[RMDB]
RNA sequence: GGGAACGACUCGAGUAGAGUCGAAAAGAAAACAAGUACCGAGAACAUUGUUUUCGCUGCUUGGCGUUGCCGUUUUGUGUUGCAGUUGGUUGGGUAACGCCGCAAAUACCAACCGGACAGACAGAUAAAUUUACCCAGUAUUCGUACUGGGUAAAUUAAAAGAAACAACAACAACAAC
Reactivity to DMS in 0.01 (KOAc 150mM, MgCl2 10mM, bicine 150mM(pH8.5), 24C), signal-to-noise 6, nucleotides 027 to 126: g010a070a050a100a110c020a000a020g000u000a040c290c040g000a030g000a040a030c020a170u030u040g010u010u000u010u000c010g010c180u010g000c000u000u000g000g010c070g000u000u000g020c040c050g030u020u020u010u010g010u020g010u010u000g010c120a110g010u010u000g000g020u000u000g000g000g010u000a050a100c100g000c020c030g000c070a020a050a090u030a070c010c000a010a010c010c010g000g000a040c060a200g000a120c110a060g010a090u030a020
Reactivity to 2A3 in 0.01 (KOAc 150mM, MgCl2 10mM, bicine 150mM(pH8.5), 24C), signal-to-noise 1, nucleotides 027 to 126: g010a000a010a000a000c030a010a010g040u050a040c030c040g040a040g040a020a030c100a290u120u270g010u020u000u010u000c010g010c010u010g010c000u050u120g000g010c010g010u010u010g040c020c020g040u050u030u120u100g160u020g030u050u140g060c030a070g000u080u060g050g010u060u050g070g000g000u020a010a010c010g010c000c030g000c020a060a070a000u180a050c010c010a000a010c000c020g040g020a020c010a010g070a010c020a010g110a060u230a110

An RNA of 177 nucleotides, treated with DMS and 2A3 and read out base by base. The 2A3 profile rests on 2,402 reads. 2A3 adducts were read by reverse transcription with SuperScript II with manganese.